[RMDB]
RNA sequence: GGGAACGACUCGAGUAGAGUCGAAAAGUCGGGAUUGUUUAUGGUGGUCGUUGAAGUCAUAACCAUAAGAUGAACGUUGGACUACGGAAAAUCUAUGAAAGUUUAUCAUAGUUAUUGGGCGACCGAGCUAUAAUUAUUAAUUCGUUAAUAAUUAUAGAAAAGAAACAACAACAACAAC
Reactivity to DMS in 0.01 (KOAc 150mM, MgCl2 10mM, bicine 150mM(pH8.5), 24C), signal-to-noise 5, nucleotides 027 to 126: g000u000c040g000g010g010a210u010u020g000u010u000u000a020u010g020g010u010g010g020u000c020g030u000u010g020a090a100g010u010c030a050u020a040a040c030c080a130u030a080a070g010a130u020g000a100a090c090g000u000u000g000g010a050c020u010a020c090g010g000a070a040a080a050u020c000u000a020u010g000a040a080a180g010u030u030u030a070u000c010a030u000a030g010u000u010a070u020u010g010g000g000c020g000a060c020c020g010a090g010
Reactivity to 2A3 in 0.01 (KOAc 150mM, MgCl2 10mM, bicine 150mM(pH8.5), 24C), signal-to-noise 2, nucleotides 027 to 126: g030u020c040g020g000g050a070u010u070g040u000u060u050a030u070g050g050u040g020g010u040c020g020u000u050g080a070a000g010u010c020a100u060a120a040c030c000a020u030a100a110g050a040u080g030a030a000c040g020u040u010g010g040a010c010u010a030c010g000g030a060a030a030a050u030c000u000a010u010g030a010a090a050g050u070u150u080a050u050c000a000u000a000g000u000u070a050u130u100g040g020g020c010g000a020c000c000g030a000g020